RNA sequence: GGGAACGACUCGAGUAGAGUCGAAAAUGAAUAAGCUGCACCUGCUUCUCGGUGCCCCCGCCCGAAAUGGGCACGGUGCACAUGCCCAGCCGCUCGGCGCCGCCGUGGGUGCCCAGGCCGCCGGUAAGUGAGGAAUAGGGUUCGCCCUAUUCCUCACAAAAGAAACAACAACAACAAC
Reactivity to DMS in 0.01 (KOAc 150mM, MgCl2 10mM, bicine 150mM(pH8.5), 24C), signal-to-noise 2, nucleotides 027 to 126: u010g010a100a070u020a040a080g030c180u010g010c020a020c030c000u000g030c070u000u000c110u000c020g000g000u000g020c030c000c010c050c070g000c190c010c000g000a050a090a100u010g000g020g010c010a000c070g030g050u000g010c040a050c050a130u020g000c010c020c030a150g000c050c050g000c100u010c050g000g010c000g010c100c190g000c020c080g000u000g000g010g030u010g000c070c000c050a150g000g000c020c050g040c080c040g010g000u000a050a060
Reactivity to 2A3 in 0.01 (KOAc 150mM, MgCl2 10mM, bicine 150mM(pH8.5), 24C), signal-to-noise 1, nucleotides 027 to 126: u150g050a020a050u100a150a000g050c140u060g000c010a030c010c030u000g100c040u110u100c050u040c140g010g010u070g000c000c000c000c010c000g020c010c000c000g010a160a150a110u300g000g000g000c020a020c070g030g030u030g080c000a010c010a040u090g060c030c020c020a000g010c010c060g010c040u080c020g030g000c010g020c090c000g000c000c050g020u080g030g040g000u070g000c050c040c030a000g020g000c010c030g030c000c000g000g030u060a100a020

Annotation:
This 177-nucleotide RNA was probed chemically with DMS and 2A3. The RNA was probed in 150 mM KOAc, 10 mM MgCl2 and 150 mM bicine (pH 8.5) at 24 C.